[RMDB]
RNA sequence: GGGAACGACUCGAGUAGAGUCGAAAAUGUGGUUUCCUGUCUUUGGACACGUAAGAAUUGGAGGCAAAGAAAUAUGGACUUGGAGACGUCUGGGGCCAGCUUGCUCCCUGCAGGCUCUAGUUCAACCUACUUUCCAUCACUUCGGUGAUGGAAAGUAAAAAGAAACAACAACAACAAC
Reactivity to DMS in 0.01 (KOAc 150mM, MgCl2 10mM, bicine 150mM(pH8.5), 24C), signal-to-noise 1, nucleotides 027 to 126: u000g000u000g010g020u000u010u000c010c040u000g000u000c040u020u020u000g000g020a090c090a060c110g000u010a150a070g040a020a120u040u020g030g000a120g000g040c040a040a030a050g000a020a070a150u020a020u000g050g000a060c010u000u000g020g000a080g000a040c010g020u020c050u000g000g000g000g010c040c040a110g000c040u030u000g000c040u020c010c000c080u000g000c000a180g020g000c000u000c000u000a010g000u000u000c030a040a100c130c130
Reactivity to 2A3 in 0.01 (KOAc 150mM, MgCl2 10mM, bicine 150mM(pH8.5), 24C), signal-to-noise 3, nucleotides 027 to 126: u120g030u110g070g000u050u020u060c000c000u020g010u000c040u060u070u140g190g020a030c010a010c160g130u090a070a020g080a100a170u030u190g020g010a020g060g000c030a060a040a020g110a010a110a000u240a130u120g010g000a050c040u070u130g020g000a060g020a040c000g000u060c040u020g000g000g000g000c080c000a090g060c080u080u050g000c010u070c030c020c010u000g000c010a020g110g000c000u000c000u000a010g000u030u010c040a040a040c000c020
The record gives the reactivity of an RNA of 177 nucleotides to DMS and 2A3. Source: RMDB library RFM100, as collected in RNAgym. The reactions ran in a buffer of 150 mM KOAc, 10 mM MgCl2 and 150 mM bicine (pH 8.5), at 24 C. For 2A3 the reverse transcriptase was SuperScript II with manganese. The 2A3 profile rests on 1,303 reads.